[RMDB]
RNA sequence: GGGAACGACUCGAGUAGAGUCGAAAAUCACAAAGCGGAUUUGGCUCGGUUGGGAGAGGUCCAGACCGAACCUCUGGAGUUCCUGUGUCCGAGACACAGAAUUCGCACCAUAAACAACGGGAGAUUCGACCCUAUGACGUUUCGACGUCAUAGGGUCAAAAGAAACAACAACAACAAC
Reactivity to 2A3 in 0.01 (KOAc 150mM, MgCl2 10mM, bicine 150mM(pH8.5), 24C), signal-to-noise 2, nucleotides 027 to 126: u120c030a010c050a110a090a000g000c000g000g030a000u010u010u030g030g010c000u000c010g000g000u090u200g000g000g000a100g000a040g030g270u040c000c000a000g020a010c000c140g080a070a070c020c040u000c000u000g000g000a000g020u070u010c000c040u050g040u080g110u050c000c060g040a000g110a100c060a010c000a080g150a010a000u000u010c000g020c000a070c000c000a060u260a100a200a040c090a040a000c050g000g080g010a070g040a100u100u080c040
Reactivity to DMS in 0.01 (KOAc 150mM, MgCl2 10mM, bicine 150mM(pH8.5), 24C), signal-to-noise 1, nucleotides 027 to 126: u000c200a000c230a080a150a060g000c050g000g000a070u000u000u000g000g000c000u050c100g000g000u000u140g060g000g000a000g000a020g000g090u000c000c070a010g000a000c060c080g000a200a000c220c120u000c040u000g010g000a020g010u000u000c020c000u000g000u100g000u050c000c000g030a050g000a000c020a130c190a170g000a000a000u000u000c000g000c000a260c000c000a110u000a120a160a120c190a020a070c300g000g000g000a200g000a250u050u090c190
Chemical mapping of a 177-nucleotide RNA with 2A3 and DMS. Conditions: 150 mM KOAc, 10 mM MgCl2 and 150 mM bicine (pH 8.5), 24 C. For DMS the reverse transcriptase was MarathonRT.